[RMDB]
RNA sequence: GGGAACGACUCGAGUAGAGUCGAAAAGGGACUGGCCCGAUGAAGCCCGGCAACCUAACUUUAUUUAAGCGUACAGUGAAGGUGCUAAUUCCAGCAAAAUGGUGUAUUCCGUUUUGGUAGAUAAGAGAAGCGUGACAUGAGUUCGCUCAUGUCACAAGGAAGAUAUCCAGUUCGCUGGAUAUCUUCCAAAAGAAACAACAACAACAAC
Reactivity to DMS in 0.01 (KOAc 150mM, MgCl2 10mM, bicine 150mM(pH8.5), 24C), signal-to-noise 1, nucleotides 027 to 156: g030g010g000a070c030u010g030g030c000c020c000g010a270u010g040a110a100g050c000c000c000g020g040c050a090a040c010c000u000a140a050c030u010u000u000a080u030u000u000a050a090g050c060g030u000a050c080a050g050u000g000a050a120g010g000u010g030c050u000a060a150u000u010c010c010a080g000c030a060a010a020a040u020g020g010u010g000u000a140u010u000c000c020g050u000u000u000u000g000g000u000a010g010a040u020a060a150g010a150g000a070a090g020c090g040u000g000a020c010a010u030g020a050g040u030u010c300g000c000u010c000a010u000g010u000c000a000c020a050a070
Reactivity to 2A3 in 0.01 (KOAc 150mM, MgCl2 10mM, bicine 150mM(pH8.5), 24C), signal-to-noise 3, nucleotides 027 to 156: g000g000g010a020c040u060g040g050c000c010c030g020a070u100g040a030a040g030c000c000c000g000g010c020a070a080c020c000u070a030a010c020u070u050u050a090u050u190u190a140a030g080c010g030u030a020c020a010g030u020g100a160a010g000g000u010g000c000u040a040a080u120u020c010c010a020g000c020a050a040a010a030u080g010g010u060g030u160a110u160u020c020c010g030u030u010u040u030g030g040u080a090g030a170u100a240a010g040a020g040a110a010g080c060g070u000g010a000c000a000u000g000a000g020u040u120c160g010c080u000c000a010u000g000u000c000a000c000a000a000